The record gives the reactivity of an RNA of 207 nucleotides to DMS and 2A3. The 2A3 profile rests on 1,068 reads. For DMS the reverse transcriptase was MarathonRT. It was measured as part of the RMDB library OK3TST.
RNA sequence: GGGAACGACUCGAGUAGAGUCGAAAAACUGGUGGGGCGAUACUUUCGUAGAAGAGAUUGCUGAGGGAGCUUUUGAUGAAAGUUUAAAAGUUCGUGAUGUUGUAGGUUUAUGGUCUCACGACACAUCUCAAGUAUUAGGAAAUACUAAAAGUAAAACGUAUUUCUGAUACUUCGGUAUCAGAAAUACAAAAGAAACAACAACAACAAC
Reactivity to DMS in 0.01 (KOAc 150mM, MgCl2 10mM, bicine 150mM(pH8.5), 24C), signal-to-noise 1, nucleotides 027 to 156: a070c060u010g010g020u010g010g010g020g010c030g000a090u010a080c070u000u030u000c060g000u000a080g040a100a150g000a090g000a160u000u000g000c030u030g000a120g010g030g010a080g000c030u000u010u000u000g010a010u010g010a160a030a210g010u020u010u010a030a040a040a090g070u010u000c030g010u020g030a110u000g000u010u000g010u010a090g040g010u000u000u010a040u040g030g010u000c010u000c020a140c050g000a120c100a090c070a070u000c010u010c010a050a080g000u000a040u000u000a080g000g000a160a060a070u000a030c020u000a050a010a050a120g010u010a040a050a070a140c260
Reactivity to 2A3 in 0.01 (KOAc 150mM, MgCl2 10mM, bicine 150mM(pH8.5), 24C), signal-to-noise 2, nucleotides 027 to 156: a010c010u050g040g000u030g010g020g020g010c010g000a020u040a060c010u090u080u220c120g020u070a040g040a190a010g010a020g040a070u070u160g020c010u010g040a070g000g020g000a020g000c020u060u060u080u210g010a030u020g040a000a100a050g050u050u120u220a080a140a020a010g040u040u070c030g030u050g020a040u040g000u080u010g010u020a060g110g020u020u110u090a040u050g020g000u040c010u000c040a030c010g050a000c030a000c000a080u040c040u010c110a040a010g010u030a030u090u010a040g080g060a000a090a020u050a040c020u050a080a090a040a010g080u100a030a130a020a010c050